[RMDB]
RNA sequence: GGGAACGACUCGAGUAGAGUCGAAAAUGGUCAUGGAGUUCUUGCCGGAGACGCUGUAUAAAGUGGAGCGACAGUACGCAAGGGCAAAGCAAACCUUGCCAGUUAACUUUGUCCGACUUUACAUGUAGCCACGUCACUAUUUCGAUAGUGACGUGGCAAAAGAAACAACAACAACAAC
Reactivity to 2A3 in 0.01 (KOAc 150mM, MgCl2 10mM, bicine 150mM(pH8.5), 24C), signal-to-noise 1, nucleotides 027 to 126: u080g040g000u150c050a120u090g000g000a120g020u070u000c010u010u010g110c050c120g000g040a000g000a040c010g030c020u010g010u060a090u040a100a030a070g150u090g020g000a040g040c030g050a020c000a000g090u090a060c010g010c250a090a100g080g000g000c020a050a010a010g000c000a070a070a070c000c000u000u030g030c030c000a000g000u000u040a040a040c000u020u000u020g000u000c000c000g000a000c040u050u040u010a000c000a150u030g110u150a000
Reactivity to DMS in 0.01 (KOAc 150mM, MgCl2 10mM, bicine 150mM(pH8.5), 24C), signal-to-noise 1, nucleotides 027 to 126: u000g090g000u000c000a000u020g000g040a010g000u000u000c020u020u020g020c000c030g040g020a040g190a180c020g010c060u030g000u020a130u000a100a020a110g000u000g020g010a070g000c000g000a040c040a100g060u010a050c210g040c170a240a070g040g040g000c000a000a000a000g020c260a070a060a090c050c000u000u000g040c130c210a300g060u000u000a020a080c000u000u000u000g000u010c000c000g050a090c160u090u000u000a010c000a120u000g000u000a140